Record summary: The data come from the RNA Mapping Database (RMDB), library OK1LIB. Structure probing data (DMS) for a 177-nucleotide construct.

RNA sequence: GGGAACGACUCGAGUAGAGUCGAAAAGCAGUCCGGUUCGGGCCACUGCGAACACGACAGGCCGGUUCGGGCCCCUGGAGUGGAUUAGGACGGACUACUACCGGGAAGGCCAGUAGGACGUCCGAAAGGCAACCAGCAGCUUCGGCUGUUGGUUGCCAAAAGAAACAACAACAACAAC
Reactivity to DMS in 0.01 (KOAc 150mM, MgCl2 10mM, bicine 150mM(pH8.5), 24C), signal-to-noise 1, nucleotides 027 to 126: g030c010a050g020u020c040c030g000g030u000u030c110g000g090g000c010c010a300c060u000g010c010g000a140a090c170a070c030g000a120c000a060g010g000c090c110g000g020u060u010c040g000g000g000c010c000c070c090u000g000g020a140g010u000g040g000a300u000u000a250g010g000a020c000g000g010a010c010u000a000c000u000a090c010c030g010g040g030a160a120g030g010c250c080a010g010u000a000g000g000a090c000g000u020c000c000g030a010a020a020

Reactivities are given for positions 27 through 126. The reactions ran in a buffer of 150 mM KOAc, 10 mM MgCl2 and 150 mM bicine (pH 8.5), at 24 C. The DMS profile rests on 1,370 reads.